About this RNA: Source: RMDB library OK1LIB, as collected in RNAgym. Structure probing data (2A3) for a 177-nucleotide construct.
[RMDB]
RNA sequence: GGGAACGACUCGAGUAGAGUCGAAAAUUGCCAAUGGUGAAAGGGAAUGUGAUCUUGAAUUUAGAUCAUCUUUUGGAUUACAAGCCAGAGCAAACUGAUCUUUUCAACACAAGAGCAACAAAGAUGCCCGUCUUUAGCCCUUCGGGGCUAAAGACGGAAAAGAAACAACAACAACAAC
Reactivity to 2A3 in 0.01 (KOAc 150mM, MgCl2 10mM, bicine 150mM(pH8.5), 24C), signal-to-noise 1, nucleotides 027 to 126: u020u050g190c100c050a010a250u260g120g000u090g140a040a040a040g010g020g000a030a100u030g000u000g000a000u030c000u000u070g090a170a180u160u140u000a090g000a000u000c000a020u150c070u000u000u040u020g000g050a000u080u200a300c030a160a110g000c000c000a000g000a000g060c050a300a000a000c000u070g000a000u000c050u000u000u000u060c120a210a070c120a070c000a060a190g000a030g110c000a000a020c120a230a060a000g210a050u150g020c000
For 2A3, 270 sequencing reads were counted.